[RMDB]
RNA sequence: GGGAACGACUCGAGUAGAGUCGAAAAGUAAGAGGAAUAAUUGAGGGGACAAUUCUUGGGUUAGGUGCUCCAAGACAUUCUGUGUAAUUGGGCCGCUGAGUUCACAUUUGUCUGCGACCCUACCUUCAGCUACAUUCUGGUUCGCCAGAAUGUAGCUAAAAGAAACAACAACAACAAC
Reactivity to 2A3 in 0.01 (KOAc 150mM, MgCl2 10mM, bicine 150mM(pH8.5), 24C), signal-to-noise 2, nucleotides 027 to 126: g100u130a050a040g050a030g060g020a120a120u070a120a090u100u100g050a060g020g020g000g000a000c040a010a060u050u060c030u050u080g030g000g000u070u050a040g030g060u040g000c020u060c000c000a000a040g040a010c020a040u170u200c180u090g080u010g000u090a070a120u070u030g020g000g000c030c030g020c050u000g040a050g090u160u110c020a020c030a050u090u050u080g060u000c010u010g020c040g020a010c020c010c000u050a020c010c040u060u070c060
Reactivity to DMS in 0.01 (KOAc 150mM, MgCl2 10mM, bicine 150mM(pH8.5), 24C), signal-to-noise 2, nucleotides 027 to 126: g030u010a040a090g010a100g010g010a090a070u020a120a140u000u010g000a080g010g000g010g000a070c130a040a090u000u010c050u000u000g010g010g020u000u010a030g010g020u000g000c110u010c010c010a080a070g020a030c120a020u000u000c150u000g010u000g000u010a070a130u000u000g020g010g040c080c060g020c030u000g000a080g010u000u000c080a060c190a080u000u000u020g010u010c020u020g010c140g000a070c030c020c000u000a040c050c050u000u000c180
Chemical mapping of a 177-nucleotide RNA with 2A3 and DMS. For 2A3 the reverse transcriptase was SuperScript II with manganese. Values cover nucleotides 27 to 126. The RNA was probed in 150 mM KOAc, 10 mM MgCl2 and 150 mM bicine (pH 8.5) at 24 C. For DMS, 2,013 sequencing reads were counted.